[RMDB]
RNA sequence: GGGAACGACUCGAGUAGAGUCGAAAAAUGCCAAUGCGAGCGACCCUCUCAGCAGCACGACUUGGGAAGAACAACCCGCAUGGUCGGUGAUGCGCUCCAACAUACCGAUGCCAGCUGGAGGCCCAGGCUGAAAGACCUCAUUCGUGAGGUCUUUCAGAAAAGAAACAACAACAACAAC
Reactivity to DMS in 0.01 (KOAc 150mM, MgCl2 10mM, bicine 150mM(pH8.5), 24C), signal-to-noise 1, nucleotides 027 to 126: a150u000g000c000c040a090a090u030g030c100g020a080g040c040g010a160c150c000c000u000c030u010c080a100g010c020a210g040c030a060c050g030a020c040u000u000g030g000g010a090a120g000a070a080c180a080a120c030c000c040g000c080a070u010g020g020u000c000g030g000u030g010a050u000g010c080g010c000u030c040c030a050a100c090a070u000a090c060c010g000a100u000g000c030c020a130g010c010u000g000g000a080g040g010c000c000c010a070g020g000

Chemical mapping of a 177-nucleotide RNA with DMS. The DMS profile rests on 754 reads. The reactions ran in a buffer of 150 mM KOAc, 10 mM MgCl2 and 150 mM bicine (pH 8.5), at 24 C.